[RMDB]
RNA sequence: GGGAACGACUCGAGUAGAGUCGAAAAGGUGUGUGCUGGAUACCAUCCCCAGUACACAGCACAUGCCACUCUUGAUACAAAACCUACUGUGCCUAACGAGUAUUCAGUGCAAAUUUUAAUUGCCCCCCACAACCCAAGAAUUCGUUCUUGGGUUGUGAAAAGAAACAACAACAACAAC
Reactivity to 2A3 in 0.01 (KOAc 150mM, MgCl2 10mM, bicine 150mM(pH8.5), 24C), signal-to-noise 9, nucleotides 027 to 126: g000g000u010g000u000g000u000g010c000u000g010g040a070u030a040c000c030a200u080c010c000c000c000a000g000u000a000c060a000c000a040g000c000a000c000a000u020g000c000c010a060c010u060c020u050u150g120a080u080a160c090a050a100a050a050c020c010u040a050c020u040g020u050g040c010c000u080a130a040c040g020a020g030u040a060u080u110c040a020g050u030g070c040a040a070a100u130u190u070u110a090a180u140u130g010c000c000c000c000c000
Reactivity to DMS in 0.01 (KOAc 150mM, MgCl2 10mM, bicine 150mM(pH8.5), 24C), signal-to-noise 4, nucleotides 027 to 126: g010g020u000g030u000g010u000g000c000u000g000g000a140u010a010c030c020a090u000c010c020c000c030a280g010u000a000c300a090c020a020g000c000a010c020a020u000g040c060c020a090c050u020c020u000u000g010a100u030a130c140a080a030a130a140c040c040u000a000c030u010g000u000g010c010c010u000a090a090c060g010a090g000u010a030u000u020c030a030g020u010g000c040a030a060a070u030u020u010u030a020a150u020u000g000c000c010c010c000c040

Source information: Structure probing data (2A3 and DMS) for a 177-nucleotide construct. For DMS the reverse transcriptase was MarathonRT. Values cover nucleotides 27 to 126. For DMS, 4,677 sequencing reads were counted. It was measured as part of the RMDB library OK1LIB. The reactions ran in a buffer of 150 mM KOAc, 10 mM MgCl2 and 150 mM bicine (pH 8.5), at 24 C.